[RMDB]
RNA sequence: GGGAACGACUCGAGUAGAGUCGAAAAAGACUGUUUACCCAGUACGCGGACCAGAUGGAACUCCGCUUCCAACUGAUGCUUCUGGAGCUGUUAUCGGGCCUGAUGGAGAACCAAUUCCUACUGACCCAUGAAUAACGGGGUUCGCCCCGUUAUUCAUAAAAGAAACAACAACAACAAC
Reactivity to DMS in 0.01 (KOAc 150mM, MgCl2 10mM, bicine 150mM(pH8.5), 24C), signal-to-noise 2, nucleotides 027 to 126: a140g010a060c030u010g000u000u000u010a140c110c050c030a060g010u010a050c220g010c000g030g000a120c080c040a050g000a080u000g010g010a060a030c050u000c170c140g000c090u000u000c020c010a040a060c040u030g000a120u010g000c010u000u000c030u010g000g000a040g010c030u000g020u010u000a060u010c110g020g000g020c030c000u000g010a090u000g000g010a090g000a050a160c100c090a060a220u000u010c010c000u000a260c170u000g000a100c040c000c020